[RMDB]
RNA sequence: GGGAACGACUCGAGUAGAGUCGAAAAAGUUCAAACGUGAUGCACUCAGCAGCCACCGCCAGCACAUCCUCCACACCGUCUCGUGCAGGGGCCCACCCAUCUCUGUGUCUUUCCAGCACACAACAGUCACCCACACUGGGCAUUCCAUUCAGAGGUAUCGUGACUAUUUAUUCGUAAAUAGUCACGAAAAAGAAACAACAACAACAAC
Reactivity to DMS in 0.01 (KOAc 150mM, MgCl2 10mM, bicine 150mM(pH8.5), 24C), signal-to-noise 3, nucleotides 027 to 156: a090g010u000u010c080a060a120a090c050g020u010g010a090u000g020c110a080c050u000c050a150g010c040a120g030c110c010a050c020c030g020c030c020a060g060c040a080c080a110u000c020c010u000c030c030a070c040a070c020c040g030u000c040u000c040g020u010g000c050a070g020g010g020g020c050c010c040a080c030c020c020a110u000c030u000c010u030g030u000g010u000c050u000u000u000c020c040a190g000c060a060c070a050c040a040a070c030a060g020u000c040a100c020c000c010a080c120a060c070u000g000g000g020c050a080u000u010c030c020a090u010u000c030a090g000a090g020g020u010a130
Reactivity to 2A3 in 0.01 (KOAc 150mM, MgCl2 10mM, bicine 150mM(pH8.5), 24C), signal-to-noise 4, nucleotides 027 to 156: a000g090u110u070c030a110a050a040c060g040u040g040a070u060g020c020a010c070u090c070a050g010c010a020g040c030c010a030c010c000g020c010c010a020g020c020a020c010a080u050c000c020u030c020c000a040c010a020c020c030g060u040c040u040c060g040u050g030c010a050g010g010g020g000c010c020c010a070c030c000c010a050u040c040u010c030u060g040u010g050u050c050u030u080u020c030c030a010g040c030a020c000a010c010a140a010c000a040g080u070c020a060c040c030c000a030c010a020c060u030g010g000g000c010a020u090u050c010c000a030u050u090c030a020g030a020g140g030u150a070
This 207-nucleotide RNA was probed chemically with DMS and 2A3. As a SHAPE reagent, 2A3 marks flexible, mostly unpaired nucleotides at the ribose 2'-OH. Conditions: 150 mM KOAc, 10 mM MgCl2 and 150 mM bicine (pH 8.5), 24 C. High DMS reactivity at an A or C suggests that its Watson-Crick edge is free. DMS adducts were read by reverse transcription with MarathonRT.